Structure probing data (DMS and 2A3) for a 177-nucleotide construct. 2A3 adducts were read by reverse transcription with SuperScript II with manganese. DMS adducts were read by reverse transcription with MarathonRT. The data come from the RNA Mapping Database (RMDB), libraries RFM100 and RFMREP. Conditions: 150 mM KOAc, 10 mM MgCl2 and 150 mM bicine (pH 8.5), 24 C.

RNA sequence: GGGAACGACUCGAGUAGAGUCGAAAAGCACACGCAGACGCAGAGUAUCGUUAAGAUGUCCAUAUUGUUGUUUUAGGCCCGCUAGUAAUGCGCUACGGGUAUUUAAUAUUGUUAAACCCUGAUAAUCGUGUAGAUAUCAGUUCGCUGAUAUCUACACAAAAGAAACAACAACAACAAC
Reactivity to DMS in 0.01 (KOAc 150mM, MgCl2 10mM, bicine 150mM(pH8.5), 24C), signal-to-noise 4, nucleotides 027 to 126: g020c030a040c050a050c060g020c040a060g010a060c090g030c060a060g010a090g020u000a020u010c020g020u020u000a070a080g000a040u000g000u010c030c040a060u010a110u000u010g000u000u000g000u000u000u000u000a080g000g000c010c010c000g000c210u020a040g000u000a070a140u030g010c100g010c030u000a030c050g000g000g000u000a020u010u020u010a070a070u010a140u000u020g000u020u010a050a090a110c040c030c000u010g020a090u020a080a090u010c190
Reactivity to 2A3 in 0.01 (KOAc 150mM, MgCl2 10mM, bicine 150mM(pH8.5), 24C), signal-to-noise 2, nucleotides 027 to 126: g090c060a060c000a020c130g040c000a010g010a070c000g030c040a000g040a010g080u050a030u080c020g000u000u100a080a020g010a050u100g000u140c050c010a030u010a030u150u060g010u000u020g000u000u000u000u010a040g030g010c000c030c000g000c000u000a000g010u130a130a210u300g050c130g040c030u010a000c000g010g000g040u000a020u010u050u000a010a020u080a040u050u060g020u000u050a070a090a090c010c000c000u060g010a080u030a250a110u090c140